[RMDB]
RNA sequence: GGGAACGACUCGAGUAGAGUCGAAAAAGCCGACGACUUACGAGUCGUCGGCACUUUUUGUACUAAGGUGCAUCUAGUGCAGAUAGUGAAGUAGAUUAGCAUCUACUGCCCUAAGUGCUCCUUCUAACCAAACGAAAUAUUUCGAUAUUUCGUUUGGAAAAGAAACAACAACAACAAC
Reactivity to DMS in 0.01 (KOAc 150mM, MgCl2 10mM, bicine 150mM(pH8.5), 24C), signal-to-noise 5, nucleotides 027 to 126: a080g030c010c000g030a040c000g010a010c010u000u000a110c190g000a030g020u000c000g020u000c010g000g020c030a000c010u000u000u010u000u000g010u000a070c050u010a040a100g000g010u000g010c020a030u010c030u000a010g010u000g000c010a010g010a080u000a030g020u010g000a090a070g010u010a070g010a090u010u020a130g010c150a110u010c000u000a010c000u010g000c020c030c010u010a050a090g010u000g000c000u000c020c020u000u010c080u010a080a270
Reactivity to 2A3 in 0.01 (KOAc 150mM, MgCl2 10mM, bicine 150mM(pH8.5), 24C), signal-to-noise 9, nucleotides 027 to 126: a000g060c000c000g010a000c010g000a000c010u040u090a040c220g110a010g000u000c000g000u000c000g010g010c000a010c000u020u010u000u030u080g050u030a040c020u030a020a030g010g000u020g010c000a020u000c020u010a010g010u000g010c030a030g090a300u050a020g050u070g100a180a020g070u140a060g040a280u190u140a040g080c020a020u010c000u010a010c000u000g010c010c010c000u020a060a010g010u000g000c000u030c000c000u010u030c020u020a060a060
An RNA of 177 nucleotides, treated with DMS and 2A3 and read out base by base. In probing experiments dimethyl sulfate is read out at A N1 and C N3, which are open when not base-paired. Values cover nucleotides 27 to 126. For DMS the reverse transcriptase was MarathonRT. Source: RMDB libraries RFM100 and RFMREP, as collected in RNAgym. Conditions: 150 mM KOAc, 10 mM MgCl2 and 150 mM bicine (pH 8.5), 24 C.